[RMDB]
RNA sequence: GGGAACGACUCGAGUAGAGUCGAAAAUCUGCGGGCAUGGAUUCGUACCACCAAGGUCACCGGUGACCAUCCGCUCGUGAUUGAGCGAGUCCGAGCGGUGGGGUGUCACUUUGUGCUUCUCCUCACACGUUAGUGUUAACUUCGGUUAACACUAACGAAAAGAAACAACAACAACAAC
Reactivity to 2A3 in 0.01 (KOAc 150mM, MgCl2 10mM, bicine 150mM(pH8.5), 24C), signal-to-noise 9, nucleotides 027 to 126: u040c030u060g030c040g020g000g010c060a100u130g040g060a090u080u080c050g030u060a080c020c030a030c020c010a070a050g030g000u050c020a010c060c040g060g070u070g050a040c000c010a030u060c010c000g010c000u000c000g140u240g030a030u050u090g070a070g120c110g030a010g010u000c010c000g000a000g000c010g000g000u020g010g050g040g010u060g010u010c020a040c010u030u060u080g040u040g020c030u060u020c010u000c010c010u050c010a050c000a010
Reactivity to DMS in 0.01 (KOAc 150mM, MgCl2 10mM, bicine 150mM(pH8.5), 24C), signal-to-noise 9, nucleotides 027 to 126: u000c030u000g020c100g010g010g020c060a070u010g010g000a110u000u000c090g020u000a110c070c020a100c080c060a070a110g010g000u010c030a060c060c150g000g010u000g010a120c010c020a080u010c020c010g010c000u000c010g000u010g020a030u000u000g010a090g010c140g010a080g010u000c010c010g000a030g010c010g010g010u000g000g010g010g020u010g000u000c030a040c030u000u010u010g020u000g000c090u000u000c040u000c020c040u000c090a100c190a190